[RMDB]
RNA sequence: GGGAACGACUCGAGUAGAGUCGAAAAAGCACGUUCGCCUUGAAGAACAGCGCCGAGCUAUGGUGCGUGCUCGCGCGAAACGAUUUCGCCAGGCCGGCGAAGCUGACCGGCGGCUCGAACCAUUCGCCGUUCGACCAGCACUCGACGUAAUCGAGAACCAUGGUUAUAUCUUCGGAUAUAACCAUGGAAAAGAAACAACAACAACAAC
Reactivity to 2A3 in 0.01 (KOAc 150mM, MgCl2 10mM, bicine 150mM(pH8.5), 24C), signal-to-noise 7, nucleotides 027 to 156: a000g020c020a020c030g020u080u110c030g050c040c040u120u150g120a170a100g040a170a040c070a070g030c020g010c060c070g060a040g020c030u070a080u180g050g010u060g050c020g010u020g010c000u020c010g040c010g000c020g050a030a050a030c050g070a140u030u050u090c020g010c010c020a050g070g060c040c040g000g020c040g030a060a070g070c060u060g030a120c010c010g000g000c000g000g000c030u030c060g060a080a040c040c010a090u090u080c060g010c020c010g020u050u080c010g000a020c000c010a020g040c060a030c000u010c010g010a000c030g050u060a070a070u040c030g000a010g010a070a010
Reactivity to DMS in 0.01 (KOAc 150mM, MgCl2 10mM, bicine 150mM(pH8.5), 24C), signal-to-noise 2, nucleotides 027 to 156: a080g020c000a120c000g010u010u000c050g040c040c050u000u010g040a110a100g010a100a070c040a110g040c010g000c060c030g020a130g000c090u010a060u000g030g010u010g020c030g050u000g010c030u000c020g040c080g000c030g000a020a090a120c050g020a150u010u010u000c020g010c030c020a160g060g010c070c050g000g020c020g010a020a090g000c050u000g010a050c010c040g040g020c010g010g010c130u000c010g010a030a080c040c090a180u000u000c080g000c020c040g010u010u000c040g000a010c010c000a110g010c040a130c040u000c010g010a010c050g020u000a080a150u000c030g000a140g010a190a300

Notes:
This 207-nucleotide RNA was probed chemically with 2A3 and DMS. For 2A3, 7,552 sequencing reads were counted. The data come from the RNA Mapping Database (RMDB), library OK3TST. Values cover nucleotides 27 to 156. For DMS, 5,126 sequencing reads were counted. 2A3 adducts were read by reverse transcription with SuperScript II with manganese. The reactions ran in a buffer of 150 mM KOAc, 10 mM MgCl2 and 150 mM bicine (pH 8.5), at 24 C. Reactivities are rounded to 0.1 and cut off at 0 and 3.